An RNA of 207 nucleotides, treated with 2A3 and read out base by base. The reactions ran in a buffer of 150 mM KOAc, 10 mM MgCl2 and 150 mM bicine (pH 8.5), at 24 C.

[RMDB]
RNA sequence: GGGAACGACUCGAGUAGAGUCGAAAAAAUGAACGCACCUUCACUUUUACUUGACUUCUACUUCAUCAGCAUAAUUGGAGAACCAUAGAUUCUUUCCCCAUGAGUGAGGGCAAAACAUACAUCUGCAGUGUUCUUAGCAUGAGGAUCAUUAAGAUGACAGGUGACUAGGUUUCGACCUAGUCACCUGAAAAGAAACAACAACAACAAC
Reactivity to 2A3 in 0.01 (KOAc 150mM, MgCl2 10mM, bicine 150mM(pH8.5), 24C), signal-to-noise 1, nucleotides 027 to 156: a000a000u240g050a020a000c050g000c070a040c000c040u050u020c030a050c030u180u090u000u300a040c010u100u190g100a010c010u090u020c000u030a100c040u070u110c010a100u030c030a030g030c030a220u120a100a080u300u010g050g050a100g000a100a000c050c150a190u080a140g010a040u190u000c040u060u050u030c000c000c000c000a080u200g000a010g070u040g010a070g030g000g030c000a000a160a000a000c000a000u240a010c000a010u010c030u070g000c030a040g050u000g000u010u000c000u000u240a160g010c180a120u150g080a000g110g000a070u080c000a000u050u210a040a000g000a010u010g080a010